[RMDB]
RNA sequence: GGGAACGACUCGAGUAGAGUCGAAAACAUCAUCAGUAGAGCACUCGAAAGACGCUUCAUCUUGAUUUACUACAAUCUUAUUGCCGGGAAUCCGCAUGAUUUUUGCAACAAUAAUCAUUCCAUCAAUAUUGAUAAGCCAGAAUCCAUUGCUGACCUGUAAAUAAAGUCGGUUCGCCGACUUUAUUUAAAAAGAAACAACAACAACAAC
Reactivity to 2A3 in 0.01 (KOAc 150mM, MgCl2 10mM, bicine 150mM(pH8.5), 24C), signal-to-noise 3, nucleotides 027 to 156: c010a030u090c010a020u020c000a020g010u040a000g060a010g010c030a010c020u010c010g030a090a060a030g030a040c070g030c030u030u060c020a120u050c030u060u080g080a090u110u160u100a050c070u050a030c030a100a040u040c030u050u080a090u080u140g030c020c020g030g000g040a070a090u020c030c040g020c030a020u040g060a080u010u040u050u130u090g020c060a080a040c000a030a070u100a070a050u060c030a060u120u050c070c030a040u070c030a120a100u080a060u110u050g030a080u040a120a040g010c000c010a010g030a010a000u000c050c010a030u060u120g000c040u010g010a030c000c000u040g060
Reactivity to DMS in 0.01 (KOAc 150mM, MgCl2 10mM, bicine 150mM(pH8.5), 24C), signal-to-noise 2, nucleotides 027 to 156: c070a060u000c070a100u020c030a060g010u000a040g000a070g010c030a030c040u000c000g000a120a100a170g010a070c060g030c030u000u000c040a080u000c020u000u000g020a100u000u010u000a140c080u010a130c050a040a080u000c050u000u000a020u000u000g010c000c110g020g000g000a040a050u010c020c130g080c210a080u000g000a040u000u000u000u000u000g000c040a040a030c030a050a020u000a010a050u000c010a050u000u000c060c040a030u000c030a050a090u010a110u010u000g020a080u000a060a070g000c000c050a090g010a070a090u000c030c070a150u000u000g010c020u010g000a110c040c000u000g020